[RMDB]
RNA sequence: GGGAACGACUCGAGUAGAGUCGAAAAUUGUUAAGUCACUUUGAAGUGCACGAAUCGAAUUAUUGUAAGCAGUAAUACUUGCCGGCUUCUUACCAGUCGUUGUACCUGUGCGAUUCAAUUGUUGCACAUACGGAUUCAUGUUCGCAUGAAUCCGUAUAAAAGAAACAACAACAACAAC
Reactivity to DMS in 0.01 (KOAc 150mM, MgCl2 10mM, bicine 150mM(pH8.5), 24C), signal-to-noise 2, nucleotides 027 to 126: u010u010g020u000u000a110a260g020u020c050a030c020u010u020u030g010a070a090g050u000g000c160a010c020g000a120a050u000c060g010a080a080u000u000a080u010u000g000u010a070a100g020c030a070g000u000a090a100u000a180c050u000u000g000c130c000g000g020c000u000u010c050u020u000a060c030c040a030g010u000c020g010u000u010g010u000a130c040c020u000g050u000g000c000g000a020u000u010c180a100a120u000u010g020u000u000g020c020a000c020
Reactivity to 2A3 in 0.01 (KOAc 150mM, MgCl2 10mM, bicine 150mM(pH8.5), 24C), signal-to-noise 1, nucleotides 027 to 126: u040u030g070u000u030a130a000g030u030c000a010c020u040u240u270g180a210a020g030u010g020c070a020c040g080a030a030u100c050g070a100a060u200u040a080u090u160g020u090a100a000g000c020a040g020u240a270a220u070a200c040u010u070g050c010c000g070g000c020u110u070c040u120u070a000c020c000a020g030u010c040g010u000u020g060u050a050c010c020u000g000u000g090c000g030a040u080u210c040a180a100u190u200g000u030u080g000c020a000c000

The record gives the reactivity of an RNA of 177 nucleotides to DMS and 2A3. The 2A3 profile rests on 609 reads. The DMS profile rests on 1,833 reads. DMS adducts were read by reverse transcription with MarathonRT. Reactivities are given for positions 27 through 126.